[RMDB]
RNA sequence: GGGAACGACUCGAGUAGAGUCGAAAAGUGCGACAUUUCGAUGUCGCACAAACCCAAUUGGUGGCACCUAACUAAACAAGCCGGGAAAAGCCAGAUGCCAACGUCCUUAGCCCUUCGGGGCUAAGAACAGAUUCACAUUUUUCGAAAUGUGAAUCUGAAAAGAAACAACAACAACAAC
Reactivity to 2A3 in 0.01 (KOAc 150mM, MgCl2 10mM, bicine 150mM(pH8.5), 24C), signal-to-noise 6, nucleotides 027 to 126: g000u000g000c000g000a000c000a000u060u060u100c190g110a010u010g000u010c000g010c000a000c000a000a000a000c000c000c000a000a100u070u060g050g000u030g020g000c030a160c090c010u060a110a080c020u110a140a090a120c070a140a020g040c060c040g020g010g000a080a160a010a010g020c010c020a030g030a110u130g020c020c020a040a030c050g060u080c010c000u000u010a010g010c010c000c010u030u050c180g030g010g000g000c000u000a010a000g000a000a010
Reactivity to DMS in 0.01 (KOAc 150mM, MgCl2 10mM, bicine 150mM(pH8.5), 24C), signal-to-noise 7, nucleotides 027 to 126: g000u000g010c000g010a000c000a010u000u010u010c170g030a020u000g010u000c000g020c000a000c010a010a060a100c010c000c010a130a120u010u010g010g030u000g000g010c050a080c010c020u000a080a110c050u010a070a080a130c120a080a070g000c060c060g000g000g010a040a080a110a110g010c020c040a060g010a040u000g000c030c020a050a070c130g000u000c060c000u000u000a010g010c000c000c000u000u010c160g020g010g010g000c000u000a000a000g010a050a110
Structure probing data (2A3 and DMS) for a 177-nucleotide construct. DMS adducts were read by reverse transcription with MarathonRT. 2A3 is a SHAPE reagent: it acylates the 2'-hydroxyl of flexible nucleotides of all four kinds. The RNA was probed in 150 mM KOAc, 10 mM MgCl2 and 150 mM bicine (pH 8.5) at 24 C. For 2A3, 14,247 sequencing reads were counted. 2A3 adducts were read by reverse transcription with SuperScript II with manganese.